[RMDB]
RNA sequence: GGGAACGACUCGAGUAGAGUCGAAAACAUUCACAAGGUGUCGCGCAUUAGUGCUGAGCAGAAGCCAAUGGAAGUUCUUCGAGAUGUGCUAUCGCGUCUUGCUCACGUUUUUUCUCAUCCUGGCAGAUCCCAACGGAGGAUUCGUCCUCCGUUGGGAAAAAGAAACAACAACAACAAC
Reactivity to DMS in 0.01 (KOAc 150mM, MgCl2 10mM, bicine 150mM(pH8.5), 24C), signal-to-noise 1, nucleotides 027 to 126: c060a030u000u010c060a080c160a050a140g010g040u000g030u000c040g010c030g010c160a110u000u010a060g020u010g020c020u030g000a190g060c040a050g030a090a000g010c150c110a090a090u050g030g010a160a040g020u000u000c010u000u010c060g030a150g010a090u010g060u000g020c060u000a020u020c110g020c040g050u000c010u000u000g060c040u010c100a040c110g000u000u000u000u020u000u000c000u000c000a190u000c060c030u020g000g030c110a060g010a120
Chemical mapping of a 177-nucleotide RNA with DMS.
Values cover nucleotides 27 to 126.
For DMS the reverse transcriptase was MarathonRT.